An RNA of 207 nucleotides, treated with 2A3 and DMS and read out base by base. DMS adducts were read by reverse transcription with MarathonRT. The reactions ran in a buffer of 150 mM KOAc, 10 mM MgCl2 and 150 mM bicine (pH 8.5), at 24 C. Reactivities are given for positions 27 through 156. For 2A3 the reverse transcriptase was SuperScript II with manganese. For 2A3, 1,241 sequencing reads were counted.

RNA sequence: GGGAACGACUCGAGUAGAGUCGAAAAUCCCAUAGGUUGCCGAAUCCGAAAGGUGCGGAGGAACCGCUUUUUGGGGUUAAUCUGCAGUGAAGCUGCAGUAGGGAUACCUUCUGUCCCGCACCCGACAGCUAACUCCGCAGGCAAUAAAGGAAGGAGAGGUCCUAAUAAUGUUCGCAUUAUUAGGACCAAAAGAAACAACAACAACAAC
Reactivity to 2A3 in 0.01 (KOAc 150mM, MgCl2 10mM, bicine 150mM(pH8.5), 24C), signal-to-noise 2, nucleotides 027 to 156: u000c000c000c000a000u080a010g080g010u010u010g010c040c000g140a170a130u040c020c000g030a040a040a030g000g020u010g000c000g010g000a010g000g020a040a050c080c050g020c040u150u210u050u120u240g020g000g000g020u020u050a040a010u050c000u000g000c010a000g020u050g240a210a040g080c000u000g000c010a000g000u010a030g010g000g000a000u080a110c000c000u010u010c000u020g010u030c000c010c000g000c010a030c030c000c000g040a120c110a030g010c010u020a040a030c000u000c000c040g000c000a000g020g000c000a030a000u130a080a030a010g030g030a000a000g000g010a090g010a040
Reactivity to DMS in 0.01 (KOAc 150mM, MgCl2 10mM, bicine 150mM(pH8.5), 24C), signal-to-noise 1, nucleotides 027 to 156: u030c000c000c000a140u030a040g020g010u000u010g000c020c000g030a260a300u030c020c020g010a150a160a190g000g020u000g010c030g000g000a140g000g010a070a070c150c050g000c070u000u000u010u030u000g040g000g010g010u000u000a050a180u020c000u000g000c010a000g050u000g030a180a150g000c000u020g020c020a030g020u000a030g000g030g000a030u010a000c030c040u000u000c030u010g030u000c080c020c000g000c170a080c000c000c000g020a090c140a030g000c060u000a220a200c010u000c020c010g000c020a030g010g000c090a130a030u000a070a100a070g010g010a130a040g020g000a220g000a180